Record summary: The record gives the reactivity of an RNA of 177 nucleotides to 2A3 and DMS. 2A3 adducts were read by reverse transcription with SuperScript II with manganese. The reactions ran in a buffer of 150 mM KOAc, 10 mM MgCl2 and 150 mM bicine (pH 8.5), at 24 C. The DMS profile rests on 8,817 reads. Source: RMDB library TTRINS, as collected in RNAgym.
RNA sequence: GGGAACGACUCGAGUAGAGUCGAAAAGAUAUGGAUCAUCGGUCAACGAAGAACAUACACUAAGUGAACCGUAUCGGAAACGAUACGGUUCAUAUGUGUAUGGGAGUUGCUACGAUGAUCCUAAGUCGAUAUUAUUCGUGUUCGCACGAAUAAUAUCAAAAGAAACAACAACAACAAC
Reactivity to 2A3 in 0.01 (KOAc 150mM, MgCl2 10mM, bicine 150mM(pH8.5), 24C), signal-to-noise 5, nucleotides 027 to 126: g020a030u070a020u100g010g010a000u000c000a000u010c010g060g220u190c030a010a020c030g300a300a050g020a030a000c000a000u010a000c010a020c040u220a300a300g050u010g020a000a000c010c010g010u000a000u010c000g000g030a000a050a010c010g000a000u000a000c000g010g000u000u000c000a000u000a020u010g000u000g010u010a010u010g000g000g000a020g010u010u000g000c050u140a220c030g000a000u000g010a000u000c000c000u000a010a000g010u010c070
Reactivity to DMS in 0.01 (KOAc 150mM, MgCl2 10mM, bicine 150mM(pH8.5), 24C), signal-to-noise 7, nucleotides 027 to 126: g000a030u000a130u010g000g000a000u000c000a000u000c000g010g010u010c020a010a010c000g010a100a180g010a160a290c000a000u000a000c000a010c000u010a160a180g000u010g010a000a020c000c000g020u000a000u000c000g000g000a040a020a090c010g010a010u000a000c010g010g010u000u000c000a000u000a100u000g010u000g000u000a000u000g000g000g000a040g010u000u000g020c300u010a300c020g000a000u000g000a000u000c000c000u000a000a080g010u000c040